Record summary:
The record gives the reactivity of an RNA of 177 nucleotides to DMS and 2A3. The RNA was probed in 150 mM KOAc, 10 mM MgCl2 and 150 mM bicine (pH 8.5) at 24 C. The 2A3 profile rests on 6,594 reads. Source: RMDB library OK2TRN, as collected in RNAgym. DMS adducts were read by reverse transcription with MarathonRT.
RNA sequence: GGGAACGACUCGAGUAGAGUCGAAAACAUGUUCAGUGUGUAAAUGAGCUAUGUGCAUACGUAUGUACUAUGUAUGUAUAUACCAUUUAUACAUACUUUUACAUAUACAUAUCCGCGCUUUAUGCCGACUGCGUAAAUGAUUCGUCAUUUACGCAGUAAAAGAAACAACAACAACAAC
Reactivity to DMS in 0.01 (KOAc 150mM, MgCl2 10mM, bicine 150mM(pH8.5), 24C), signal-to-noise 4, nucleotides 027 to 126: c140a050u010g010u000u010c140a060g020u000g020u000g020u000a010a020a010u000g000a070g030c140u000a020u000g020u000g010c030a020u000a020c040g010u000a000u020g010u000a210c160u000a020u000g010u000a010u000g010u010a000u000a010u000a020c060c040a050u000u000u010a040u000a020c000a010u010a070c040u000u010u000u000a050c020a020u000a090u010a100c120a110u000a110u000c070c040g000c110g020c050u000u010u010a080u020g010c030c130g000
Reactivity to 2A3 in 0.01 (KOAc 150mM, MgCl2 10mM, bicine 150mM(pH8.5), 24C), signal-to-noise 5, nucleotides 027 to 126: c060a040u040g020u020u070c030a010g030u030g000u000g000u040a000a010a020u050g020a070g020c070u010a000u010g010u010g000c000a010u020a000c010g020u020a010u260g190u060a150c060u020a070u030g010u020a010u000g000u000a010u010a000u010a010c010c000a010u000u020u040a060u010a010c000a000u040a030c000u090u150u060u030a010c010a010u100a030u020a130c040a050u180a070u130c060c020g040c050g000c070u260u240u100a080u300g020c010c010g050